[RMDB]
The record gives the reactivity of an RNA of 207 nucleotides to 2A3.
The reactions ran in a buffer of 150 mM KOAc, 10 mM MgCl2 and 150 mM bicine (pH 8.5), at 24 C.
RNA sequence: GGGAACGACUCGAGUAGAGUCGAAAAAGCGGGCAUACUACGGUAUGCGCGCAAUCAGAAAUCGGGAAUGAUGUUCUCCCCUGGGAUUCCAAAACCGCUGUUUCGCUGAUGACGUCUGCUUUUUUAAUCACCACCGUUUGGUUCGCCAAACGGUGAAGAUUUCCUAUCUCUUCGGAGAUAGGAAAUCAAAAGAAACAACAACAACAAC
Reactivity to 2A3 in 0.01 (KOAc 150mM, MgCl2 10mM, bicine 150mM(pH8.5), 24C), signal-to-noise 2, nucleotides 027 to 156: a000g010c010g050g000g000c000a000u000a000c000u010a010c140g070g000u000a000u000g010c040g000c000g000c000a010a090u080c020a010g120a040a140a030u140c070g000g020g060a030a100u060g040a090u100g150u100u000c040u030c010c010c020c020u050g040g070g080a130u150u100c040c010a020a030a040a050c050c030g020c060u040g050u000u090u090c040g010c080u030g010a010u030g030a040c020g030u000c020u010g020c020u120u050u010u030u030u130a100a110u040c060a000c060c000a000c000c000g000u010u000u000g000g000u020u050c180g000c060c010a000a000a000c010g000g000u000g000a000a000
Description
The data come from the RNA Mapping Database (RMDB), library M2RFPK. For 2A3, 1,287 sequencing reads were counted. For 2A3 the reverse transcriptase was SuperScript II with manganese.